RNA sequence: GGGAACGACUCGAGUAGAGUCGAAAAGCUUUUUGUAAGUUGGAUUCGGCAACGCCAUGGAGAUGUCAUUAAAUAGCAGUUUUCCAGCUCUAGGCAUAAAGUUUCUAGUAAUUCUAAACAUUGAAAAUUCUUCAUCCUUGCUUAGGCCUUCUAAGACGAGAAACUGGUAUUUCGAUACCAGUUUCUCAAAAGAAACAACAACAACAAC
Reactivity to 2A3 in 0.01 (KOAc 150mM, MgCl2 10mM, bicine 150mM(pH8.5), 24C), signal-to-noise 1, nucleotides 027 to 156: g010c030u080u160u020u220u180g110u080a080a100g030u000u010g000g040a040u220u000c000g010g010c010a000a000c040g040c050c000a010u040g010g000a030g030a080u000g070u000c000a040u040u220a120a110a040u300a100g030c100a000g010u000u040u150u110c030c000a030g000c000u050c030u010a010g000g070c000a030u100a040a010a000g000u040u050u050c070u040a050g010u050a000a070u020u090c010u090a120a180a050c000a060u020u050g120a000a050a030a140u190u020c000u040u070c000a040u190c010c060u070u040g010c000u010u010a010g000g120c000c000u000u150c120u100a060a150g230a010c300